[RMDB]
An RNA of 177 nucleotides, treated with DMS and read out base by base. The data come from the RNA Mapping Database (RMDB), library OK2TST. The reactions ran in a buffer of 150 mM KOAc, 10 mM MgCl2 and 150 mM bicine (pH 8.5), at 24 C.
RNA sequence: GGGAACGACUCGAGUAGAGUCGAAAAAUAUCUCUCCGAUGAGUUUGGCCUCACGCUUUCCUCGCUUUGGUAUAUGGGCAUGGUCCCCUGGGUGGGCGCAUGUGUAACCAUCCUUCUGGGCGGUAAAACUAAUAAAAUUAUUCGUAAUUUUAUUAGUAAAAGAAACAACAACAACAAC
Reactivity to DMS in 0.01 (KOAc 150mM, MgCl2 10mM, bicine 150mM(pH8.5), 24C), signal-to-noise 1, nucleotides 027 to 126: a090u020a020u000c030u000c030u010c060c050g020a090u000g000a090g010u000u000u010g010g000c040c010u010c040a060c100g000c030u000u000u000c010c030u010c080g000c050u000u000u020g030g010u000a080u000a070u020g000g000g020c040a090u000g010g000u000c040c000c030c070u010g030g010g020u000g010g000g010c090g000c040a030u000g020u000g000u010a110a150c040c020a050u000c040c020u000u000c080u000g020g000g000c070g020g010u010a050a020a070